[RMDB]
RNA sequence: GGGAACGACUCGAGUAGAGUCGAAAAUGCGUUUCAACCUGCGUGGGUUGAGGCGGCUUAGCGGAUUAGGGCGUUCUGCCCCAGUGGUACCAUUACCCUAUGCAAAGUCUGCAUGCAGGCAGGGUAGUGUGCUGCUCGGGCACAACUGGUCGAGAGCGAAAUGAAGGACGUUCGCGUCCUUCAUUUCAAAAGAAACAACAACAACAAC
Reactivity to 2A3 in 0.01 (KOAc 150mM, MgCl2 10mM, bicine 150mM(pH8.5), 24C), signal-to-noise 2, nucleotides 027 to 156: u060g000c040g000u020u040u020c000a020a010c070c000u230g070c220g230u300g040g000g000u010u010g030a010g040g000c050g030g000c000u090u070a040g060c020g030g030a110u110u160a080g060g050g000c050g010u130u020c030u020g010c000c010c000c000a020g000u050g020g000u040a030c150c000a010u000u010a000c010c000c010u040a070u110g030c060a050a100a150g070u070c100u080g050c040a160u100g000c000a060g130g000c000a010g010g000g010u020a000g020u010g010u010g000c000u000g000c010u000c010g000g000g000c000a000c010a020a010c030u130g130g030u120c010g020a050g010a030g220c030

The record gives the reactivity of an RNA of 207 nucleotides to 2A3. The 2A3 profile rests on 1,158 reads. The RNA was probed in 150 mM KOAc, 10 mM MgCl2 and 150 mM bicine (pH 8.5) at 24 C. For 2A3 the reverse transcriptase was SuperScript II with manganese.